Conditions: 150 mM KOAc, 10 mM MgCl2 and 150 mM bicine (pH 8.5), 24 C.
Chemical mapping of a 177-nucleotide RNA with 2A3 and DMS.
Reactivities are given for positions 27 through 126.
[RMDB]
RNA sequence: GGGAACGACUCGAGUAGAGUCGAAAAGAAACUUGGAGAUUCAGAAGCACGAUGUAGAGGUCUCGCAGAAACCAUCAACGAGGAAAAGCGACUCACAGAGGAAUUUGCAAAAAUUCUCAUUGAAGAAUGACAGGCUGUAAUUCGUUACAGCCUGUCAAAAAGAAACAACAACAACAAC
Reactivity to 2A3 in 0.01 (KOAc 150mM, MgCl2 10mM, bicine 150mM(pH8.5), 24C), signal-to-noise 1, nucleotides 027 to 126: g010a020a030a010c020u000u030g070g000a100g000a000u000u160c040a000g100a070a030g010c050a030c170g060a100u090g010u100a070g010a020g170g080u000c030u030c110g000c030a010g140a110a050a000c030c020a020u160c030a010a010c020g050a220g000g000a000a000a000a020g020c000g070a080c000u000c050a000c030a070g040a100g000g070a120a030u050u000u160g030c010a000a000a000a000a150u000u000c000u000c040a030u080u170g080a060a000g090a080a080
Reactivity to DMS in 0.01 (KOAc 150mM, MgCl2 10mM, bicine 150mM(pH8.5), 24C), signal-to-noise 1, nucleotides 027 to 126: g000a120a050a070c300u000u000g000g000a160g020a110u000u020c020a110g000a060a070g030c010a090c080g020a040u000g000u050a030g000a080g030g030u030c100u010c050g000c050a080g020a110a130a110c080c000a000u040c020a050a150c170g000a030g000g000a050a050a110a220g000c090g010a070c050u050c000a000c160a100g000a050g000g020a020a050u000u000u000g000c050a030a010a000a030a020u000u000c020u000c000a110u040u000g000a020a110g000a090a090
For 2A3 the reverse transcriptase was SuperScript II with manganese.